[RMDB]
RNA sequence: GGGAACGACUCGAGUAGAGUCGAAAAUAAGCACCUCGUUAGGUGAGGCGUCUACACGAACAUAGGCCACUGACCCCGAACGUCGAGAGACGCCCCGGGUCAGGACAGCUCUUCCCGGCUUAAGGGUAAAAUCACAACGUCUUCGGACGUUGUGAAACUUACUACUCAGAUUCGUCUGAGUAGUAAGAAAAGAAACAACAACAACAAC
Reactivity to DMS in 0.01 (KOAc 150mM, MgCl2 10mM, bicine 150mM(pH8.5), 24C), signal-to-noise 2, nucleotides 027 to 156: u010a050a060g010c020a040c010c010u010c040g000u000u000a150g000g030u000g010a030g040g030c030g000u000c010u010a110c090a130c050g000a100a100c050a130u000a070g050g030c030c030a150c030u010g000a040c000c010c000c090g020a040a050c020g030u000c020g000a300g020a300g000a020c000g010c010c010c020c140g000g070g010u000c010a020g000g000a070c020a140g000c020u010c030u000u000c000c000c020g040g000c060u000u010a100a100g010g000g030u000a030a050a080a170u000c000a020c000a000a010c000g010u010c010u000u010c290g040g000a030c000g050u000u000g010u010g000a010a000a100
Reactivity to 2A3 in 0.01 (KOAc 150mM, MgCl2 10mM, bicine 150mM(pH8.5), 24C), signal-to-noise 4, nucleotides 027 to 156: u170a030a020g030c000a020c010c010u030c050g140u130u300a100g000g050u080g020a040g010g020c040g040u000c040u090a060c100a020c140g120a210a010c050a120u120a050g090g000c040c020a050c030u010g010a010c000c020c020c030g040a090a020c010g000u000c020g000a030g010a000g010a160c000g010c010c010c010c000g010g010g000u000c010a000g000g020a030c030a010g000c010u030c020u050u010c010c000c000g000g000c020u130u130a060a070g090g000g030u060a050a060a050a130u030c000a000c000a000a000c000g010u000c000u030u030c120g090g000a000c000g010u000u000g000u000g000a000a000a000